Source: RMDB library POS240, as collected in RNAgym.
Chemical mapping of a 307-nucleotide RNA with DMS and 2A3.
The DMS profile rests on 25,668 reads.
[RMDB]
RNA sequence: GGGAACGACUCGAGUAGAGUCGAAAAGAAACAUGAUUGAUCUCUACCUCACUAUGGUAAUAGGGAAUGGUGAUGGGCGACUCAAUUCUUAGAAUAUCGAAACGAUGAAGGAGGUCAGUGUGAGGAUUUUCAUGUAAGAUGUCACUAGCUUCCUUCUUACAUGCAAAGUUCUCACAUGUUCCUUCAAGGAAGCUAGUGACAUAAGAAUUGAGUCAAUAUCAUCUACUAUCGUUUCGAUAUUCUAGUGAGGUAGAGAUCAAUCAUGUAGAGCUGUGUUCGCACAGUUCAAAAGAAACAACAACAACAAC
Reactivity to DMS in 0.01 (KOAc 150mM, MgCl2 10mM, bicine 150mM(pH8.5), 24C), signal-to-noise 6, nucleotides 027 to 266: g010a170a150a040c000a000u000g000a010u010u000g000a000u000c000u000c000u000a010c000c000u000c000a010c000u000a030u010g010g010u020a060a060u010a090g010g010g000a060a040u010g010g010u000g010a050u010g010g000g020c150g010a050c030u010c020a040a040u000u010c010u000u000a040g000a070a060u010a020u000c040g000a020a020a020c040g010a050u000g010a090a090g010g010a050g010g010u010c180a050g030u010g010u000g000a080g000g000a060u000u010u020u000c010a030u000g000u010a100a090g000a030u000g000u000c010a010c000u000a010g000c010u000u000c000c000u000u000c140u000u000a010c010a010u000g000c140a070a080a110g010u010u010c060u000c060a210c030a020u000g010u000u010c120c090u010u010c220a030a010g000g000a020a010g010c010u000a010g010u010g000a010c010a000u000a000a010g000a050a030u010u000g000a040g010u000c020a040a090u020a060u010c020a020u000c020u010a060c070u000a040u010c040g000u000u000u000c010g010a050u000a010u000u000c010u000a010g010u000g010a010g000g000u010a000g000a000g000a000u000c000a000a000u000c000a000u000g000u000a030
Reactivity to 2A3 in 0.01 (KOAc 150mM, MgCl2 10mM, bicine 150mM(pH8.5), 24C), signal-to-noise 2, nucleotides 027 to 266: g060a010a160a020c000a010u010g010a030u010u000g010a000u010c010u020c030u000a020c000c010u010c000a000c020u060a040u110g120g010u120a040a090u080a220g030g050g030a020a090u080g030g020u070g040a100u110g050g120g040c010g040a020c010u000c050a020a060u060u000c000u020u040a010g020a020a000u010a010u060c000g000a010a030a060c010g010a010u040g060a030a060g170g080a020g080g050u210c070a040g040u070g000u040g110a120g100g010a040u100u140u040u000c020a020u030g010u030a000a040g020a080u020g020u020c000a010c000u010a010g000c000u000u010c000c000u010u060c000u010u020a000c020a000u030g060c050a130a030a150g050u140u040c060u010c080a030c000a000u010g000u000u050c000c000u110u070c020a010a020g000g000a000a000g000c000u000a010g000u010g010a000c000a010u000a000a010g010a010a070u030u010g000a000g010u000c000a010a000u050a010u080c000a010u040c020u020a050c010u030a010u040c010g000u010u010u010c000g000a000u000a010u010u000c000u000a000g000u000g010a000g000g000u000a000g000a000g020a000u000c000a000a000u010c000a010u000g000u010a020